[RMDB]
RNA sequence: GGGAACGACUCGAGUAGAGUCGAAAAGAUAUGGAAACUCGAACGCCUGAUAUCUCGGAAACGAGCCGAGUCAGGAACUACGUUUAGAGUUUCCUAAGUCAAAGUCAUCAAGUUCGCUUGAUGACAAUCAGACUAUAACGUUCGCGUUAUAGUCUGAAAAAGAAACAACAACAACAAC
Reactivity to DMS in 0.01 (KOAc 150mM, MgCl2 10mM, bicine 150mM(pH8.5), 24C), signal-to-noise 2, nucleotides 027 to 126: g010a020u000a300u010g000g000a000a000a010c000u000c000g000a030a000c010g000c000c010u000g010a040u000a140u000c020u010c010g000g000a090a090a200c150g000a080g040c260c100g000a050g010u000c010a020g000g000a120a030c110u010a300c030g000u000u000u000a060g020a010g000u000u000u000c000c010u000a010a100g000u000c050a100a070a080g010u010c000a000u000c010a000a000g000u000u030c230g020c000u000u000g020a020u000g000a000c010a040a060
Reactivity to 2A3 in 0.01 (KOAc 150mM, MgCl2 10mM, bicine 150mM(pH8.5), 24C), signal-to-noise 3, nucleotides 027 to 126: g010a030u060a040u150g010g010a020a020a000c000u010c010g020a020a010c000g020c040c000u020g020a060u090a200u300c010u000c000g000g070a220a300a230c130g050a130g190c040c020g050a050g040u010c030a000g000g020a020a030c120u260a010c120g020u000u040u180a230g000a000g000u000u010u010c000c000u000a020a000g000u010c060a060a000a070g010u010c000a000u000c010a020a000g040u050u100c200g090c220u000u010g000a000u000g000a010c000a000a040

Background: The record gives the reactivity of an RNA of 177 nucleotides to DMS and 2A3. For 2A3 the reverse transcriptase was SuperScript II with manganese. High DMS reactivity at an A or C suggests that its Watson-Crick edge is free. The RNA was probed in 150 mM KOAc, 10 mM MgCl2 and 150 mM bicine (pH 8.5) at 24 C.